The record gives the reactivity of an RNA of 177 nucleotides to 2A3 and DMS.

RNA sequence: GGGAACGACUCGAGUAGAGUCGAAAAGAUCUGUUUAAUGUAGGUCAUUCUACGGAUACGAUACGUGUGUCGACGAUACUGCGGCACGCGUAUCGGUGGUAUCUAGAGUCGGUGCCACUACUGACUAUCAUGUCUACCGCUUCGGUGGUAGGCAUGAAAAAGAAACAACAACAACAAC
Reactivity to 2A3 in 0.01 (KOAc 150mM, MgCl2 10mM, bicine 150mM(pH8.5), 24C), signal-to-noise 9, nucleotides 027 to 126: g030a020u020c020u040g130u060u140u150a180a130u220g090u120a040g050g070u080c020a030u050u000c010u030a060c030g030g010a040u050a080c010g000a000u000a000c000g000u000g000u000g000u010c010g010a280c020g060a200u100a300c190u300g020c000g000g000c000a000c000g000c000g000u000a000u000c000g000g000u000g020g000u030a030u030c030u050a050g020a030g180u080c050g010g010u040g060c020c030a050c040u100a050c020u040g110a040c020u030a050
Reactivity to DMS in 0.01 (KOAc 150mM, MgCl2 10mM, bicine 150mM(pH8.5), 24C), signal-to-noise 9, nucleotides 027 to 126: g010a020u000c010u000g000u010u010u030a070a100u070g010u020a050g010g010u000c020a080u020u000c010u000a040c060g010g000a030u010a050c010g000a010u000a000c000g000u000g010u000g010u000c010g000a080c080g020a180u050a100c150u060g010c010g000g000c000a000c010g010c000g000u000a000u000c000g000g000u030g020g020u010a020u000c020u000a110g000a050g010u000c040g000g000u010g000c030c040a100c160u020a080c060u020g010a060c080u020a180

Reactivities are given for positions 27 through 126. The data come from the RNA Mapping Database (RMDB), library OK1LIB.